Source: RMDB library M2RFPK, as collected in RNAgym. Structure probing data (2A3) for a 207-nucleotide construct.
RNA sequence: GGGAACGACUCGAGUAGAGUCGAAAAACACCAAAACUGAAAACGGAAGGCAAUCCUUCCACGACGAUACUUACUUUCCUUUGAUCGUCGUUACUACUGGCAUAGCCACAAAGGAGAACAAACCUGAGCGCGGACACUGACUUCGGUCAGUGUCCAACCGGAAGUUUUAGUUCGCUAAAACUUCCGGAAAAGAAACAACAACAACAAC
Reactivity to 2A3 in 0.01 (KOAc 150mM, MgCl2 10mM, bicine 150mM(pH8.5), 24C), signal-to-noise 2, nucleotides 027 to 156: a000c080a110c030c000a070a070a030a090c140u180g060a150a120a000a020c040g000g000a010a000g010g010c120a070a220u210c020c000u000u010c010c000a000c000g000a000c000g000a000u120a200c010u090u070a030c020u040u130u120c020c020u080u040u030g040a010u000c000g020u000c000g000u000u060a050c040u020a000c010u040g000g000c020a200u100a120g030c020c000a060c040a010a070a000g050g010a030g030a080a040c030a130a060a020c010c060u090g070a040g070c090g010c060g050g000a000c000a000c000u000g020a000c000u020u010c130g040g000u000c000a000g000u000g000u000c000c000a000a000
The reactions ran in a buffer of 150 mM KOAc, 10 mM MgCl2 and 150 mM bicine (pH 8.5), at 24 C.